[RMDB]
RNA sequence: GGGAACGACUCGAGUAGAGUCGAAAAGGCAAUUACUUCGGUAAUUGCCAUAUAAACUUGAGAAAAGAAGGGCGCAACACAAGAAAAUUGCGAAAUAAACAAACAACGAGAGCUUCGGCUCUCGUAAUCAUAGCAAUAGUUUCGACUAUUGCUAUGAAAAAGAAACAACAACAACAAC
Reactivity to 2A3 in 0.01 (KOAc 150mM, MgCl2 10mM, bicine 150mM(pH8.5), 24C), signal-to-noise 4, nucleotides 027 to 126: g020g000c010a010a000u010u000a010c020u050u090c200g010g000u010a010a000u010u000g000c000c000a010u000a000u000a000a020a000c010u060u080g060a040g090a160a200a030a020g080a030a060g050g020g030c010g000c000a030a000c030a010c040a270a030g060a070a120a050a050u030u030g010c020g030a000a050a110u170a040a080a020c090a040a060a010c050a050a000c000g000a000g000a000g000c010u040u070c170g050g000c010u000c000u000c000g010u000a000a000
Reactivity to DMS in 0.01 (KOAc 150mM, MgCl2 10mM, bicine 150mM(pH8.5), 24C), signal-to-noise 4, nucleotides 027 to 126: g000g000c000a000a010u000u000a000c000u000u010c190g030g020u000a000a010u000u010g010c000c000a010u000a020u000a080a130a120c040u010u010g010a130g000a150a090a060a050g000a100a050g000g010g010c020g020c020a020a010c110a080c120a090a100g010a060a060a070a050u000u000g010c050g020a060a060a050u020a080a050a060c140a080a110a110c180a060a040c010g000a010g000a020g000c000u010u020c190g020g010c000u000c000u000c000g010u000a010a050